[RMDB]
RNA sequence: GGGAACGACUCGAGUAGAGUCGAAAACAGAUUGGAUUGAUUACGGCGGAAGGAUAAUAACUCACGAAGGGAGCUUGAAGUGGUUUCCUGGCCCUCGAAAUAAGCAGCAGAGGGGACGAGCGGUAUAGCUGGAGAAUUUCUUCGGAAAUUCUCCAGCAAAAGAAACAACAACAACAAC
Reactivity to DMS in 0.01 (KOAc 150mM, MgCl2 10mM, bicine 150mM(pH8.5), 24C), signal-to-noise 1, nucleotides 027 to 126: c040a050g010a090u000u000g000g000a010u020u000g000a110u000u000a030c010g000g120c000g040g000a100a130g050g010a010u020a110a140u040a090a080c090u000c110a300c080g000a090a030g000g020g000a040g000c020u000u000g010a010a160g000u000g010g000u000u000u010c040c020u010g050g020c020c000c000u000c000g000a070a060a080u120a000a100g010c140a080g030c110a110g000a070g010g000g020g000a050c000g000a020g000c000g000g000u000a110u020a150
Reactivity to 2A3 in 0.01 (KOAc 150mM, MgCl2 10mM, bicine 150mM(pH8.5), 24C), signal-to-noise 1, nucleotides 027 to 126: c010a000g160a000u150u230g160g000a040u040u040g080a000u000u050a000c000g080g000c010g020g020a020a000g000g110a060u010a090a010u100a270a060c000u040c070a060c030g080a110a000g100g000g000a000g230c100u040u010g000a000a000g020u100g060g070u070u000u000c000c000u010g000g000c000c000c000u010c000g120a080a020a020u280a200a060g050c090a020g000c000a000g000a000g070g000g000g000a030c300g000a000g010c040g050g000u100a050u220a170
This 177-nucleotide RNA was probed chemically with DMS and 2A3. The reactions ran in a buffer of 150 mM KOAc, 10 mM MgCl2 and 150 mM bicine (pH 8.5), at 24 C. For DMS, 1,163 sequencing reads were counted. The data come from the RNA Mapping Database (RMDB), library RFM100. For 2A3, 355 sequencing reads were counted.